[RMDB]
RNA sequence: GGGAACGACUCGAGUAGAGUCGAAAAGGUAUCCACUUCGGUGGAUACCAAAGGCGAUCCCAGCAUCAGGGAACAACAACAAUAGAUGCAUCCCUAAGGCCAAAAUUCCGGAUUUCGAUCCGGAAAAUAUAACACUGAGAUUCGUCUCAGUGUUAUAAAAAGAAACAACAACAACAAC
Reactivity to DMS in 0.01 (KOAc 150mM, MgCl2 10mM, bicine 150mM(pH8.5), 24C), signal-to-noise 5, nucleotides 027 to 126: g000g010u000a000u000c000c010a000c010u000u020c180g030g010u000g000g000a010u000a000c000c000a030a050a080g000g000c060g000a150u000c000c010c000a200g000c050a050u000c060a080g000g020g010a050a090c080a060a070c100a070a070c120a110a110u000a100g000a080u000g000c070a110u000c000c010c010u000a080a100g000g010c050c060a050a070a080a180u010u000c000c000g010g010a030u000u010u010c190g010a020u010c000c000g000g000a000a000a030a080
Reactivity to 2A3 in 0.01 (KOAc 150mM, MgCl2 10mM, bicine 150mM(pH8.5), 24C), signal-to-noise 3, nucleotides 027 to 126: g000g000u000a000u000c000c000a010c010u020u060c180g120g000u000g000g000a000u000a000c000c000a000a060a000g050g000c030g030a040u020c000c010c000a000g030c000a030u080c040a020g030g040g040a060a120c030a040a020c010a020a020c030a160a130u080a160g090a050u040g010c040a060u020c010c000c010u020a030a050g090g010c030c020a070a090a030a060u080u010c000c000g000g020a010u050u080u110c140g030a010u020c000c000g000g020a010a000a000a000